Structure probing data (2A3 and DMS) for a 177-nucleotide construct.
The DMS profile rests on 3,669 reads.
It was measured as part of the RMDB library RFM100.
The RNA was probed in 150 mM KOAc, 10 mM MgCl2 and 150 mM bicine (pH 8.5) at 24 C.
For 2A3, 362 sequencing reads were counted.
Values cover nucleotides 27 to 126.

RNA sequence: GGGAACGACUCGAGUAGAGUCGAAAAUCGAGGUUUUUCGUCGUGUCAACUUGCGAAGGGAAUUACGGGUUCUUGAUGAGCAUUGGUGAUAGGAGGUGUGGGCUUGGUUAGUAGAGGUAGAAUUAUGAUAGAGCUUCUGUUUCGACAGAAGCUCUAUAAAAGAAACAACAACAACAAC
Reactivity to 2A3 in 0.01 (KOAc 150mM, MgCl2 10mM, bicine 150mM(pH8.5), 24C), signal-to-noise 1, nucleotides 027 to 126: u030c000g000a030g030g030u000u000u000u000u070c010g050u000c010g010u020g050u180c020a090a040c040u050u040g000c000g030a060a070g110g000g050a000a070u070u050a010c160g020g020g000u040u150c040u180u120g010a120u010g000a000g050c030a010u000u140g030g000u000g000a010u180a070g060g010a040g000g120u140g000u020g000g030g000c000u010u000g040g000u000u090a000g000u090a030g040a000g030g000u040a000g000a070a040u110u070a110u300g120
Reactivity to DMS in 0.01 (KOAc 150mM, MgCl2 10mM, bicine 150mM(pH8.5), 24C), signal-to-noise 2, nucleotides 027 to 126: u020c030g010a100g010g000u000u010u000u000u030c040g030u030c120g000u010g010u010c120a060a090c140u000u000g010c000g030a120a140g010g000g000a060a120u050u030a080c200g020g000g000u000u030c030u000u000g010a040u010g010a030g030c040a060u010u010g000g030u010g000a070u000a100g010g010a050g010g010u010g030u030g040g000g020c060u020u000g010g000u060u000a080g000u000a080g020a050g010g000u010a050g020a080a110u020u010a090u000g000